[RMDB]
RNA sequence: GGGAACGACUCGAGUAGAGUCGAAAAUGGUGUUAAGUGGAAUAAGUGGAAAAAUAUACAUAUAUGUACAGGGGGCUACAUAUAUGUAUAUGCCCCCUUGAGUCAGUAUAAGUAGGUAUAAGGUGGAAGUAUUAGUGCUGUUCGCAGCACUAAUACUAAAAGAAACAACAACAACAAC
Reactivity to 2A3 in 0.01 (KOAc 150mM, MgCl2 10mM, bicine 150mM(pH8.5), 24C), signal-to-noise 1, nucleotides 027 to 126: u120g000g000u020g010u070u070a120a080g060u090g020g060a080a130u120a170a030g040u170g070g000a060a090a010a000a000u010a000u010a000c000a000u010a000u010a000u040g000u030a000c070a090g000g040g010g010g030c000u030a000c010a000u020a000u020a000u040g000u000a000u000a000u070g000c000c000c020c020c000u020u000g000a000g010u040c020a000g020u040a080u000a170a010g080u100a030g150g040u150a100u010a110a070g090g000u020g040g050a040
Reactivity to DMS in 0.01 (KOAc 150mM, MgCl2 10mM, bicine 150mM(pH8.5), 24C), signal-to-noise 2, nucleotides 027 to 126: u000g000g050u000g000u000u020a040a150g000u000g000g000a130a010u020a020a060g010u040g000g000a020a040a080a110a050u020a010u000a020c010a020u020a010u000a020u010g000u000a030c080a060g010g020g020g060g010c130u000a020c030a010u000a030u010a030u000g010u010a010u010a020u000g050c170c030c000c030c020u000u000g000a040g010u020c040a100g030u000a050u020a000a080g010u020a020g010g000u000a060u020a060a090g030g000u000g000g000a070
Structure probing data (2A3 and DMS) for a 177-nucleotide construct. The RNA was probed in 150 mM KOAc, 10 mM MgCl2 and 150 mM bicine (pH 8.5) at 24 C. Reactivities are given for positions 27 through 126. It was measured as part of the RMDB library OK1LIB.